[RMDB]
RNA sequence: GGGAACGACUCGAGUAGAGUCGAAAAUCUGUGGGUGGUGGUCGAGAAACUUCGGUUGUGUGCCACGCUGCGAGCCUGCGAGAUCUACUGUUAAACUCCGUGCCGCCCAGCACGCGAGGGGUCUCGACAACGGGUGCGCUAGUCCAUCUGCUAUGUGGAUAUAAGAAGCGUUCGCGCUUCUUAUAUCAAAAGAAACAACAACAACAAC
Reactivity to 2A3 in 0.01 (KOAc 150mM, MgCl2 10mM, bicine 150mM(pH8.5), 24C), signal-to-noise 3, nucleotides 027 to 156: u100c060u050g050u050g010g000g000u060g050g010u010g000g010u060c020g020a010g130a110a090a030c060u100u100c170g070g010u060u030g040u020g050u140g070c010c000a010c020g010c010u020g000c000g020a020g020c020c030u060g000c030g000a000g000a000u010c020u080a070c080u150g110u260u230a050a110a020c010u010c020c010g000u010g000c000c010g020c000c000c000a000g030c000a000c020g010c090g000a010g000g010g000g010u000c000u000c010g020a040c050a120a080c040g010g000g000u040g020c020g000c050u100a010g020u020c010c010a010u010c030u050g010c020u080a070u220g120u140g110
Reactivity to DMS in 0.01 (KOAc 150mM, MgCl2 10mM, bicine 150mM(pH8.5), 24C), signal-to-noise 3, nucleotides 027 to 156: u000c070u010g030u000g000g010g010u000g020g080u010g010g010u010c030g020a220g010a110a030a030c020u000u010c120g030g020u010u010g010u000g020u010g010c020c050a120c110g040c050u010g010c010g010a040g000c000c010u000g000c020g010a030g010a030u000c020u000a160c130u010g020u000u000a120a130a240c010u000c000c000g000u000g010c000c020g000c030c060c050a300g000c010a030c000g000c090g010a050g000g010g000g020u000c000u000c020g010a140c020a060a100c040g010g010g010u010g010c000g010c010u000a050g000u000c030c020a030u000c010u000g000c020u010a030u010g020u000g000

The record gives the reactivity of an RNA of 207 nucleotides to 2A3 and DMS.
It was measured as part of the RMDB library ARCHII.
For 2A3, 2,103 sequencing reads were counted.
For DMS the reverse transcriptase was MarathonRT.
2A3 adducts were read by reverse transcription with SuperScript II with manganese.
The reactions ran in a buffer of 150 mM KOAc, 10 mM MgCl2 and 150 mM bicine (pH 8.5), at 24 C.